[RMDB]
RNA sequence: GGGAACGACUCGAGUAGAGUCGAAAAGAAGGUGUGUUCGCACACCUUCAAAUUGGUCAGACAAAAGCUUCCUGGAGUCAAGACCUGAAAACCAAAGGAGCAAAACCACCUACUUCGGUAGGUGGAAGUAGAUAGACGAGUUCGCUCGUCUAUCUACAAAAGAAACAACAACAACAAC
Reactivity to 2A3 in 0.01 (KOAc 150mM, MgCl2 10mM, bicine 150mM(pH8.5), 24C), signal-to-noise 3, nucleotides 027 to 126: g010a010a000g000g000u010g000u000g010u030u120c200g020c080a000c010a000c000c000u010u000c000a000a000a000u080u060g000g000u010c000a020g000a070c040a070a100a030a020g010c020u170u100c030c010u050g040g010a070g030u040c050a130a100g020a010c010c010u010g030a040a040a000a000c020c010a000a060a050g020g010a030g020c020a020a020a050a040c000c000a010c000c000u000a020c010u040u070c270g110g000u000a000g000g010u000g000g000a000a000
Reactivity to DMS in 0.01 (KOAc 150mM, MgCl2 10mM, bicine 150mM(pH8.5), 24C), signal-to-noise 3, nucleotides 027 to 126: g010a000a010g000g030u000g020u010g020u000u020c260g020c010a000c000a000c010c000u000u000c000a010a040a060u010u000g020g000u010c000a140g030a030c020a070a090a120a090g010c070u000u000c040c020u000g000g020a290g010u000c010a060a170g000a020c010c010u010g000a030a040a080a220c020c020a030a130a080g000g000a020g000c060a100a070a100a210c020c000a000c000c000u010a000c000u000u010c160g020g010u000a000g000g010u010g000g000a000a020